The record gives the reactivity of an RNA of 207 nucleotides to 2A3. The RNA was probed in 150 mM KOAc, 10 mM MgCl2 and 150 mM bicine (pH 8.5) at 24 C. It was measured as part of the RMDB library M2RFOK.

[RMDB]
RNA sequence: GGGAACGACUCGAGUAGAGUCGAAAAAACGUUGCAUGAUCGUAAAACAUGCCCGGCUUACCGUGAGUCGCCUUUGAAAGAAAGGUUUACACGGACUCUGUUGCGUUACGCACGUACCUAACUUGUGAAAACGGCAUCUUGUUCGCAAGAUGCCGAACAACAACGCAGACUUCGGUCUGCGUUGUUGAAAAGAAACAACAACAACAAC
Reactivity to 2A3 in 0.01 (KOAc 150mM, MgCl2 10mM, bicine 150mM(pH8.5), 24C), signal-to-noise 1, nucleotides 027 to 156: a000a000c040g000u010u000g010c000a000u000g040a050u190c040g020u160a160a000a000a000c000a000u000g000c000c000c010g010g010c030u000u000a050c000c000g000u000g000a000g010u000c000g000c000c000u000u000u000g070a090a030a000g040a000a010a000g010g030u040u010u050a060c010a000c000g060g060a150c060u150c060u150g080u060u050g000c010g040u100u070a090c130g010c020a010c000g010u080a040c020c100u080a100a190c010u090u080g040u060g120a030a140a020a020c050g020g000c000a000u000c000u000u020g040u100u050c120g060c120a000a000g050a000u000g000c000c000g120a010a000